The record gives the reactivity of an RNA of 177 nucleotides to DMS and 2A3. The 2A3 profile rests on 4,013 reads.
[RMDB]
RNA sequence: GGGAACGACUCGAGUAGAGUCGAAAACAUCAGGAAUGCCAGGUUACAGAGACUGAAUGCCUCUGCCCUUAUGAAGCUCUAGUACUCAGAAAGCCUUUAUUCCUAGAUAGUACAGCUAAAGGCAUGAACCAUGUUGAUGGUUCGCCAUCAACAUGGUAAAAGAAACAACAACAACAAC
Reactivity to DMS in 0.01 (KOAc 150mM, MgCl2 10mM, bicine 150mM(pH8.5), 24C), signal-to-noise 4, nucleotides 027 to 126: c070a060u010c050a090g010g000a080a020u000g000c080c100a030g010g000u000u000a170c080a050g000a070g020a040c010u010g020a090a070u020g000c010c010u000c030u000g010c130c030c040u000u000a070u000g010a080a070g000c010u000c090u000a050g000u000a050c030u000c050a100g000a090a090a100g010c040c030u000u010u010a080u010u000c030c010u000a090g010a080u000a070g010u010a070c080a070g010c060u000a020a050a060g000g010c030a080u000g000a120
Reactivity to 2A3 in 0.01 (KOAc 150mM, MgCl2 10mM, bicine 150mM(pH8.5), 24C), signal-to-noise 3, nucleotides 027 to 126: c020a040u080c020a000g000g090a110a010u030g040c070c040a010g000g020u050u070a060c030a030g020a000g030a040c020u100g100a190a030u130g000c000c010u020c020u040g030c050c000c000u020u030a150u140g080a050a010g000c010u000c000u080a030g040u060a140c010u010c040a010g050a100a090a010g030c010c000u060u110u030a040u040u020c000c000u010a020g010a060u060a030g040u040a070c020a040g010c020u050a070a050a020g050g010c040a030u090g040a030
Values are in units of 0.01, from 0 to 300, in steps of 10.
The DMS profile rests on 3,883 reads.
2A3 adducts were read by reverse transcription with SuperScript II with manganese.
The RNA was probed in 150 mM KOAc, 10 mM MgCl2 and 150 mM bicine (pH 8.5) at 24 C.